[RMDB]
Annotation:
Structure probing data (DMS and 2A3) for a 177-nucleotide construct. It was measured as part of the RMDB library M2PK50. 2A3 is a SHAPE reagent: it acylates the 2'-hydroxyl of flexible nucleotides of all four kinds. 2A3 adducts were read by reverse transcription with SuperScript II with manganese. For DMS, 1,305 sequencing reads were counted.

RNA sequence: GGGAACGACUCGAGUAGAGUCGAAAACUAGGAUCGUUCGCGAUCCUAGAAAGGCGCGGCACCGUCCGCGGAACAAACGGCUAAACAAGAAAGUCAGCAUAAAAAUCAUCAGCUUCGGCUGAUGAAAGCUGUACAAUUACUUCGGUAAUUGUACAGCAAAAGAAACAACAACAACAAC
Reactivity to DMS in 0.01 (KOAc 150mM, MgCl2 10mM, bicine 150mM(pH8.5), 24C), signal-to-noise 2, nucleotides 027 to 126: c010u000a000g000g000a010u010c010g000u010u000c210g000c020g020a000u010c000c010u000a000g000a020a090a090g010g000c030g010c000g000g000c010a300c050c060g000u000c010c000g010c010g010g010a020a190c160a010a020a020c040g010g000c080u010a100a040a100c150a130a070g020a110a060a050g000u000c140a040g060c110a100u010a010a050a110a100a170u000c000a010u000c000a010g000c000u000u000c240g010g000c000u000g020a000u010g000a000a040a040
Reactivity to 2A3 in 0.01 (KOAc 150mM, MgCl2 10mM, bicine 150mM(pH8.5), 24C), signal-to-noise 3, nucleotides 027 to 126: c000u000a000g000g000a010u000c030g000u080u030c140g000c000g100a000u000c000c000u000a000g000a000a020a000g100g030c020g000c000g010g000c040a050c110c020g160u170c000c000g000c000g030g050a020a010c010a000a050a030c010g000g000c050u130a100a110a030c040a100a070g110a200a100a020g090u140c040a030g080c050a100u170a140a180a000a010a040u020c000a000u010c010a000g020c010u060u110c180g150g010c010u020g010a000u000g000a010a010a010